[RMDB]
RNA sequence: GGGAACGACUCGAGUAGAGUCGAAAAAGCCACUACGGUGGCAAACCCUCCAGAGCAGGGGCUGUAUCAUAACCAGGCUGUGAGCUGAACGAGCAUGGGUAUGAUACGACCUCAGUUUGGAGGAGAAAUAUUUACACAGCUUCGGCUGUGUAAAUAUAAAAGAAACAACAACAACAAC
Reactivity to DMS in 0.01 (KOAc 150mM, MgCl2 10mM, bicine 150mM(pH8.5), 24C), signal-to-noise 3, nucleotides 027 to 126: a110g000c010c000a000c020u000a100c170g040g020u000g010g000c000a010a030a100c070c010c000u000c010c000a010g000a050g000c060a080g030g030g010g010c000u000g020u000a010u020c000a000u000a000a010c000c000a020g000g010c020u010g010u020g020a160g040c240u020g010a120a080c070g010a020g000c000a040u000g000g000g010u000a000u000g000a010u000a000c000g010a050c000c000u000c000a100g010u000u010u010g000g010a010g000g000a050g000a050a090
Reactivity to 2A3 in 0.01 (KOAc 150mM, MgCl2 10mM, bicine 150mM(pH8.5), 24C), signal-to-noise 6, nucleotides 027 to 126: a000g010c000c000a010c000u050a020c220g110g000u010g000g000c010a010a040a050c010c010c000u010c000c010a030g010a090g170c060a070g010g010g000g010c000u030g000u010a000u000c000a000u000a010a020c000c000a010g020g000c000u020g030u130g160a120g120c180u130g120a100a020c040g050a080g000c010a010u010g010g000g000u010a000u010g000a000u000a010c010g010a040c000c000u010c000a020g010u010u020u020g000g010a000g000g010a050g050a010a090

Source information: This 177-nucleotide RNA was probed chemically with DMS and 2A3. The reactions ran in a buffer of 150 mM KOAc, 10 mM MgCl2 and 150 mM bicine (pH 8.5), at 24 C. Values are in units of 0.01, from 0 to 300, in steps of 10.